This 207-nucleotide RNA was probed chemically with 2A3. It was measured as part of the RMDB library M2RFPK.

[RMDB]
RNA sequence: GGGAACGACUCGAGUAGAGUCGAAAAACGCGGAGUACGCUCCGCGACAACACCUCUUUCGACCCGCUAACCGAGACCUAUGGGUCGUUAAAUUACGUCUCUAUCUUACUCACAUAACAUCGCACAAAAAACGUGGUUCGGUUCGCCGAACCACGAAGACUACCCUUAGCUUCGGCUAAGGGUAGUCAAAAGAAACAACAACAACAAC
Reactivity to 2A3 in 0.01 (KOAc 150mM, MgCl2 10mM, bicine 150mM(pH8.5), 24C), signal-to-noise 2, nucleotides 027 to 156: a000c030g000c070g000g000a010g000u040a060c200g040c030u000c010c000g040c010g010a010c000a030a030c000a030c040c000u130c140u120u300u160c010g010a010c000c020c020g050c250u180a000a040c000c040g000a010g010a020c010c010u070a090u190g010g010g020u010c000g020u020u020a000a050a010u140u050a000c020g000u000c000u000c000u000a130u080c070u060u120a100c010u080c090a120c030a090u230a220a000c000a090u230c120g000c110a020c110a090a080a020a000a020a040c080g000u010g000g030u000u020c040g000g000u060u020c100g040c060c000g000a000a000c000c000a000c010g000a000a000

2A3 adducts were read by reverse transcription with SuperScript II with manganese.
The reactions ran in a buffer of 150 mM KOAc, 10 mM MgCl2 and 150 mM bicine (pH 8.5), at 24 C.